[RMDB]
RNA sequence: GGGAACGACUCGAGUAGAGUCGAAAAGUCGGGCGAAGCGUUGGUCUAGGCAGUACGGAAAAAUUGCCUUUCGCAUGAUGGAAACCAAACUCCAUCCACCAAUAAAUUUGAGCUACCGUUACCUGCUCCUUUGAACCGUCAUGGUUGCCGGUGUCCGAAUAUCAUUGAUAUUCGUAUCAAUGAUAUUAAAAGAAACAACAACAACAAC
Reactivity to 2A3 in 0.01 (KOAc 150mM, MgCl2 10mM, bicine 150mM(pH8.5), 24C), signal-to-noise 8, nucleotides 027 to 156: g070u050c020g000g020g010c050g040a060a020g020c030g060u040u060g030g010u030c050u060a030g010g010c010a020g020u070a050c110g070g060a060a050a030a030a040u100u050g010c010c000u070u080u080c130g010c090a070u160g000a000u010g000g030a030a080a110c110c000a070a100a060c050u000c000c000a000u000c000c020a050c030c040a050a050u140a110a100a060u160u070u140g040a030g010c010u040a060c010c030g030u050u040a040c010c030u030g010c020u070c020c010u080u110u110g050a060a050c030c010g070u080c050a070u150g060g010u030u040g020c010c020g050g010u040g020u000c010c010g020
Reactivity to DMS in 0.01 (KOAc 150mM, MgCl2 10mM, bicine 150mM(pH8.5), 24C), signal-to-noise 6, nucleotides 027 to 156: g030u000c040g030g010g030c030g030a080a080g010c070g030u010u000g020g010u010c040u000a070g020g030c010a040g030u000a160c060g020g010a060a080a050a080a070u000u000g010c010c030u000u000u010c080g020c080a140u010g010a040u000g010g000a060a100a220c090c140a060a080a170c080u000c020c010a090u000c010c040a090c040c010a050a090u000a050a070a180u000u000u010g000a120g010c020u010a070c050c030g010u000u010a040c030c030u000g000c020u000c020c030u000u000u010g010a050a090c030c020g000u000c060a110u000g020g020u000u000g010c020c030g010g020u000g010u010c020c030g000
The record gives the reactivity of an RNA of 207 nucleotides to 2A3 and DMS.